The data come from the RNA Mapping Database (RMDB), library OK2TST. Structure probing data (DMS and 2A3) for a 177-nucleotide construct.
RNA sequence: GGGAACGACUCGAGUAGAGUCGAAAAGGGUUCUGAGGGCUGGUGGGUGGCGCUCAUUUGUUUAGGUGAAUUAACUUCACAGUUAGAUAACCAAUCCCCACUGCUGGGUGACUUCCCACGUGGUUGCCCGUAUAUCGCAUUUCGAUGCGAUAUACGGAAAAGAAACAACAACAACAAC
Reactivity to DMS in 0.01 (KOAc 150mM, MgCl2 10mM, bicine 150mM(pH8.5), 24C), signal-to-noise 2, nucleotides 027 to 126: g020g010g000u000u010c100u000g000a110g000g020g030c060u010g020g010u000g010g000g000u010g000g000c050g030c040u010c040a050u010u000u010g000u000u010u000a160g020g000u000g000a060a090u010u000a050a050c140u000u000c220a060c150a100g010u010u000a040g010a070u010a120a070c040c030a080a130u010c040c000c020c100a150c060u000g010c100u000g000g010g010u010g010a110c120u010u010c000c000c010a070c160g040u000g000g000u000u010g010c090
Reactivity to 2A3 in 0.01 (KOAc 150mM, MgCl2 10mM, bicine 150mM(pH8.5), 24C), signal-to-noise 1, nucleotides 027 to 126: g080g000g050u070u150c050u110g060a050g040g070g110c040u060g040g020u030g050g060g010u040g030g000c040g030c060u090c030a090u130u150u120g090u070u150u150a040g050g000u040g040a050a110u130u030a060a080c020u130u170c040a020c000a040g020u000u050a010g000a100u080a060a020c010c020a030a040u130c000c010c010c010a050c040u090g000c070u020g000g050g040u000g070a100c030u000u030c000c020c000a000c020g060u130g000g120u090u110g040c000